[RMDB]
RNA sequence: GGGAACGACUCGAGUAGAGUCGAAAAGGAUGCUCGUUCGCGAGCAUCCACUGAGAUAGCCACUAUAAACAUUAAGUCUUCCUACUCGAGACAGGAUGUCUAUGCUCCUGGCCUUCGGGCCAGGAAAUUUCUGUAUUAUGUUCGCAUAAUACAGAAAAAAAGAAACAACAACAACAAC
Reactivity to 2A3 in 0.01 (KOAc 150mM, MgCl2 10mM, bicine 150mM(pH8.5), 24C), signal-to-noise 4, nucleotides 027 to 126: g000g010a000u000g000c010u020c010g040u030u080c230g010c000g110a000g000c000a000u000c000c010a000c010u050g020a050g020a050u070a050g080c070c040a070c040u120a090u170a300a160a040c060a090u100u120a110a000g030u020c010u030u010c000c000u010a030c000u010c010g020a020g030a070c050a030g160g040a100u110g060u060c030u070a130u140g060c010u010c000c010u010g000g000c000c000u030u050c190g070g000g000c020c000a000g000g000a010a000a000
Reactivity to DMS in 0.01 (KOAc 150mM, MgCl2 10mM, bicine 150mM(pH8.5), 24C), signal-to-noise 4, nucleotides 027 to 126: g010g010a010u000g010c000u000c000g020u010u020c170g030c020g020a000g000c000a010u000c000c000a030c090u000g000a160g010a070u000a070g010c060c100a080c140u000a080u000a060a070a060c070a030u000u000a160a140g010u000c020u000u000c090c010u010a020c020u000c040g010a020g010a090c050a090g010g010a070u010g010u000c060u000a070u010g010c170u000c000c000u000g010g000c000c010u000u010c160g040g010g000c010c000a000g000g000a000a010a060
Chemical mapping of a 177-nucleotide RNA with 2A3 and DMS.
DMS adducts were read by reverse transcription with MarathonRT.
For 2A3, 4,614 sequencing reads were counted.
The DMS profile rests on 5,346 reads.
2A3 adducts were read by reverse transcription with SuperScript II with manganese.
The RNA was probed in 150 mM KOAc, 10 mM MgCl2 and 150 mM bicine (pH 8.5) at 24 C.